[RMDB]
RNA sequence: GGGAACGACUCGAGUAGAGUCGAAAAAAAAAAGAUAUGGACCAGAACUACAGCGACCUACGCGUUGAAACCUUGUCGGAAACGACAAGGUGGAGCGUAGCAAGCUGCUGGUCCUAAGUCAAAAAAACAGAAUGUUUUUCUUCGGAAAAACAUUCUGAAAAGAAACAACAACAACAAC
Reactivity to DMS in 0.01 (KOAc 150mM, MgCl2 10mM, bicine 150mM(pH8.5), 24C), signal-to-noise 1, nucleotides 027 to 126: a000a010a040a060a030a060g000a020u000a020u040g000g010a010c000c000a010g010a110a010c040u040a300c050a000g000c000g000a300c300c010u010a000c010g020c000g000u020u030g000a100a180a000c000c000u000u000g000u000c000g000g010a000a020a030c010g020a000c000a000a010g000g000u000g020g000a000g000c010g020u000a010g020c040a000a220g030c000u000g020c010u000g000g000u000c000c000u000a000a030g000u040c000a000a020a060a060a070a060a200